[RMDB]
RNA sequence: GGGAACGACUCGAGUAGAGUCGAAAAUGGAGGAGUGGCUGAACUGUCAGCGGUCCUGGCUCUACCUGGAGCCCAUCUUUAGCUCUGAGGACAUCAACCAGCAGCUGCCUGUGGAGAGCAAGCGCUACCAGACCAUGGAGCGGAUCUGGAAGAAGAACAGGAAAAUAGUCUUCGGACUAUUUUCCUGAAAAGAAACAACAACAACAAC
Reactivity to 2A3 in 0.01 (KOAc 150mM, MgCl2 10mM, bicine 150mM(pH8.5), 24C), signal-to-noise 1, nucleotides 027 to 156: u120g030g000a000g040g000a040g050u120g240g000c070u050g000a090a100c080u150g090u100c040a040g040c080g040g030u000c000c000u010g010g030c010u020c000u030a220c040c060u090g000g000a020g020c000c000c000a120u020c050u060u090u150a000g000c000u020c020u040g050a040g010g050a060c040a110u030c030a010a120c050c010a010g110c000a000g020c050u020g000c000c020u070g000u060g000g070a070g000a000g050c030a010a080g030c040g000c070u090a170c010c000a010g010a020c000c000a050u140g050g000a020g060c030g040g000a090u020c020u090g000g050a020a000g170a050a020g030a040a000
This 207-nucleotide RNA was probed chemically with 2A3.
The reactions ran in a buffer of 150 mM KOAc, 10 mM MgCl2 and 150 mM bicine (pH 8.5), at 24 C.